Structure probing data (DMS) for a 177-nucleotide construct. For DMS, 750 sequencing reads were counted. It was measured as part of the RMDB library TTRINS.
RNA sequence: GGGAACGACUCGAGUAGAGUCGAAAAGAUAUGGACACUCCUAAACAGAGAUAUUGUAACGUUUGACGCCUCUCGGAAACGAGAGGCCGAGUUACUGUAUCGACGAAGUUUAGGAGUGUCCUAAGUCCGAGGAGGGUAUGUUCGCAUACCCUCCUCGAAAAGAAACAACAACAACAAC
Reactivity to DMS in 0.01 (KOAc 150mM, MgCl2 10mM, bicine 150mM(pH8.5), 24C), signal-to-noise 1, nucleotides 027 to 126: g000a080u010a300u010g020g020a020c000a000c000u010c000c000u000a000a010a040c000a110g020a260g000a030u000a000u020u000g000u000a010a020c010g050u000u030u000g020a220c300g000c000c000u000c020u000c000g010g000a110a140a170c010g000a000g010a050g020g060c030c000g010a000g030u000u000a000c000u000g010u000a010u000c020g000a200c230g010a170a070g000u000u000u000a000g010g010a060g000u000g030u000c020c000u000a010a060g000u000c060